RNA sequence: GGGAACGACUCGAGUAGAGUCGAAAAGAUAUGGACGUGUUUUGCGUGUCCGAAGAACGAGCUCGGAAACGAGCUCGGGAGGAACACGCAAACACGUCCUAAGUCAAAACGCUCCUUCGGGAGCGAAGACUCUAAUCCUCUUCGGAGGAUUAGAGUCAAAAGAAACAACAACAACAAC
Reactivity to 2A3 in 0.01 (KOAc 150mM, MgCl2 10mM, bicine 150mM(pH8.5), 24C), signal-to-noise 1, nucleotides 027 to 126: g040a030u080a050u150g000g000a000c020g010u030g000u020u070u200u180g000c000g000u020g000u050c020c010g100a170a010g020a020a020c000g000a010g050c000u010c020g020g090a120a110a110c020g020a000g040c000u020c010g000g000g010a040g010g000a050a030c040a020c000g070c030a000a000a000c000a000c000g010u000c000c000u000a000a000g010u020c000a010a000a030a070c020g020c000u010c000c050u000u080c260g130g000g030a030g030c010g000a030a010
Reactivity to DMS in 0.01 (KOAc 150mM, MgCl2 10mM, bicine 150mM(pH8.5), 24C), signal-to-noise 1, nucleotides 027 to 126: g000a070u000a300u000g000g000a040c010g010u000g000u000u000u000u010g010c010g020u000g000u000c000c010g000a080a130g010a160a200c020g000a000g010c010u000c000g030g010a110a110a300c010g000a000g020c000u000c010g000g000g000a090g010g010a010a040c000a000c000g000c000a010a010a000c000a010c000g010u000c010c000u010a020a020g000u020c040a090a080a060a150c030g000c000u000c000c000u000u010c140g050g010g000a000g000c000g000a010a060

Source: RMDB library TTRDEL, as collected in RNAgym. Chemical mapping of a 177-nucleotide RNA with 2A3 and DMS. Reactivities are given for positions 27 through 126.